Chemical mapping of a 177-nucleotide RNA with 2A3.
Conditions: 150 mM KOAc, 10 mM MgCl2 and 150 mM bicine (pH 8.5), 24 C.
2A3 adducts were read by reverse transcription with SuperScript II with manganese.
It was measured as part of the RMDB library OK1LIB.
RNA sequence: GGGAACGACUCGAGUAGAGUCGAAAACUGGAGGCACUGCGUGGCACAUCCGGUGCUGCGUAUCUCAAUUCUCGUGGAAUAUUUAACCUUCCUGCUGAGGCGAUCCGGUUCAAUGCCAGGCAGAGACCUCCCGAUCCAUCUUCGGAUGGAUCGGGAGAAAAGAAACAACAACAACAAC
Reactivity to 2A3 in 0.01 (KOAc 150mM, MgCl2 10mM, bicine 150mM(pH8.5), 24C), signal-to-noise 2, nucleotides 027 to 126: c080u080g070g000a000g000g010c010a000c270u000g030c000g130u000g020g000c000a020c000a080u060c000c140g090g010u000g000c030u000g000c000g040u100a110u040c030u050c000a080a050u050u000c100u040c040g060u100g010g030a140a100u070a170u300u130u130a130a080c030c000u020u050c000c000u010g090c010u060g010a020g030g000c050g020a000u000c000c040g020g000u000u140c060a140a020u050g020c000c030a080g140g000c030a010g010a020g030a170c000